[RMDB]
RNA sequence: GGGAACGACUCGAGUAGAGUCGAAAAGAUAUGGAGGACCUACCCACCCGUGGUGAGCGAAGAACUGGUGUUACUCGGAAACGAGUAACACCAGGGAGCUCAUGGCCACGGAGGGUCCUCCUAAGUCGUACGUAGAAAAGUUCGCUUUUCUACGUACAAAAGAAACAACAACAACAAC
Reactivity to DMS in 0.01 (KOAc 150mM, MgCl2 10mM, bicine 150mM(pH8.5), 24C), signal-to-noise 3, nucleotides 027 to 126: g030a170u030a150u000g000g010a040g010g010a020c010c010u010a220c000c000c010a300c130c000c020g010u000g020g010u000g030a050g040c010g020a170a150g030a120a090c010u000g010g020u000g000u000u010a010c010u010c000g000g010a110a080a240c010g020a020g020u000a000a000c000a000c000c010a000g000g000g000a060g030c020u010c010a100u010g040g000c000c000a010c000g000g000a080g000g010g010u000c000c010u000c000c020u000a010a040g010u020c110
Reactivity to 2A3 in 0.01 (KOAc 150mM, MgCl2 10mM, bicine 150mM(pH8.5), 24C), signal-to-noise 4, nucleotides 027 to 126: g130a150u300a260u300g010g000a010g000g010a010c000c010u210a300c270c010c020a000c000c000c020g010u000g000g020u300g020a000g000c020g250a300a020g010a090a060c000u000g050g000u000g000u000u000a000c000u000c010g000g010a080a090a100c010g030a000g010u000a020a000c000a000c000c000a000g000g000g000a010g000c000u000c020a050u110g300g000c000c000a010c000g000g000a000g000g030g000u000c010c000u000c000c000u010a000a000g000u030c020